[RMDB]
RNA sequence: GGGAACGACUCGAGUAGAGUCGAAAAGCAACUCGGUUCGCCGAGUUGCAAAUAAAAUCAGCGGUAAAUUCGAGGCGUAAAUUACCGCUGAACGCCUCGAAAAAAGUCUUCAGUUCGCUGAAGACAAGUACGAUAGAGCGUUCGCGCUCUAUCGUACAAAAGAAACAACAACAACAAC
Reactivity to 2A3 in 0.01 (KOAc 150mM, MgCl2 10mM, bicine 150mM(pH8.5), 24C), signal-to-noise 1, nucleotides 027 to 126: g020c010a010a020c000u010c000g010g110u050u150c210g030c110c000g000a010g010u000u010g000c000a010a000a000u030a000a000a010a050u020c020a010g030c000g000g030u050a030a090a160u050u050c000g050a090g080g130c010g000u010a000a100a050u070u150a050c020c020g000c000u010g000a010a000c000g040c000c000u030c100g080a040a020a000a040a040a060g000u000c030u000u010c000a010g020u010u070c150g080c060u010g000a030a030g000a000c030a000a000